An RNA of 177 nucleotides, treated with DMS and 2A3 and read out base by base. For 2A3, 4,766 sequencing reads were counted. DMS adducts were read by reverse transcription with MarathonRT. The DMS profile rests on 2,900 reads. Conditions: 150 mM KOAc, 10 mM MgCl2 and 150 mM bicine (pH 8.5), 24 C.
RNA sequence: GGGAACGACUCGAGUAGAGUCGAAAAGCGGGAACGGUUCGGCAAUGAGGCUGGCCCGUCGCGCUCGGAACAUCUUGCGUCGCAACGGCAUCGAGGUGUCGCGCUACUUUGCCGAACUGGACUGGGACUCCUUGUUGCUAUUCGUAGCAACAAGGAGAAAAGAAACAACAACAACAAC
Reactivity to DMS in 0.01 (KOAc 150mM, MgCl2 10mM, bicine 150mM(pH8.5), 24C), signal-to-noise 4, nucleotides 027 to 126: g010c050g010g000g020a070a200c030g010g000u000u010c000g020g010c020a020a020u000g020a290g010g040c050u000g030g000c080c020c020g010u000c050g010c160g000c040u000c050g010g040a140a100c110a070u000c040u010u000g000c300g010u020c080g020c110a090a150c090g020g010c040a060u000c030g000a050g020g000u000g010u010c050g000c180g000c030u010a140c030u000u010u010g000c000c000g000a020a010c020u010g010g000a130c040u000g000g000g000a170
Reactivity to 2A3 in 0.01 (KOAc 150mM, MgCl2 10mM, bicine 150mM(pH8.5), 24C), signal-to-noise 3, nucleotides 027 to 126: g100c050g000g030g030a110a120c010g000g000u000u000c010g010g000c020a020a030u080g040a080g160g000c130u100g120g010c030c010c000g050u040c000g000c000g060c000u040c030g040g050a120a060c010a100u050c050u070u100g030c040g090u080c080g000c120a130a150c100g050g020c020a080u100c060g040a030g060g040u020g000u030c020g000c000g020c030u070a100c030u010u030u000g000c000c000g000a000a000c000u000g010g000a010c010u010g070g010g030a050